[RMDB]
RNA sequence: GGGAACGACUCGAGUAGAGUCGAAAAGCCAUCGCUUUCGAGCGAUGGCAUUGCCCAAAGAGGACCUGGGGGUGUCUGGGCUGCUAAACUCAUCAGCCCUUCUACCGCUAAAUUUCGAUUUAGCGAACACUCUUGCCCAUUUCGAUGGGCAAGAGUGAAAAGAAACAACAACAACAAC
Reactivity to DMS in 0.01 (KOAc 150mM, MgCl2 10mM, bicine 150mM(pH8.5), 24C), signal-to-noise 1, nucleotides 027 to 126: g040c000c000a030u000c000g050c000u000u000u010c220g040a030g030c010g000a000u020g000g010c000a000u000u000g010c000c000c000a060a100a190g010a070g000g010a100c090c080u000g010g030g040g000g130u000g000u000c170u010g050g030g000c000u020g010c220u010a050a060a120c110u010c100a040u010c070a000g000c010c020c000u000u020c140u000a110c200c010g010c000u000a000a000a010u000u000u010c190g000a020u000u000u000a000g000c000g000a050a130